RNA sequence: GGGAACGACUCGAGUAGAGUCGAAAACACAGGCGACUUAAUCGGAGAGCGGUUACACGCGAGGAAGAUGAAAUUAUUACAUCAGUAGACUCGAGAUUACUACAACUUGCGUUGGUAUCUCAAAUAACUAAUUCCGUAAAUUCGUUUACGGAAUUAGAAAAGAAACAACAACAACAAC
Reactivity to DMS in 0.01 (KOAc 150mM, MgCl2 10mM, bicine 150mM(pH8.5), 24C), signal-to-noise 7, nucleotides 027 to 126: c090a060c100a080g010g020c040g010a070c110u000u010a080a100u000c050g010g000a110g010a120g000c050g010g000u010u010a060c110a100c060g010c030g010a050g000g010a160a100g010a020u000g000a070a080a120u010u010a090u010u000a100c030a020u000c030a090g010u000a070g010a100c050u000c060g000a080g000a090u010u010a050c060u000a060c090a100a070c050u000u000g010c120g000u000u000g020g000u000a060u000c010u010c020a050a060a070u010a040a150
Reactivity to 2A3 in 0.01 (KOAc 150mM, MgCl2 10mM, bicine 150mM(pH8.5), 24C), signal-to-noise 5, nucleotides 027 to 126: c090a000c030a050g080g030c020g030a060c050u100u150a050a050u120c020g020g020a030g010a010g090c020g010g020u050u080a020c050a010c020g040c020g010a030g040g020a060a110g020a020u040g050a030a090a050u250u190a090u110u180a090c010a040u030c010a030g070u070a030g060a060c030u010c090g030a030g000a070u100u110a040c050u020a010c000a070a020c020u060u100g010c030g060u030u030g060g030u060a100u000c000u000c010a080a120a040u120a060a010
The record gives the reactivity of an RNA of 177 nucleotides to DMS and 2A3. The DMS profile rests on 8,249 reads. The RNA was probed in 150 mM KOAc, 10 mM MgCl2 and 150 mM bicine (pH 8.5) at 24 C. Reactivities are given for positions 27 through 126. Values are in units of 0.01, from 0 to 300, in steps of 10. For DMS the reverse transcriptase was MarathonRT.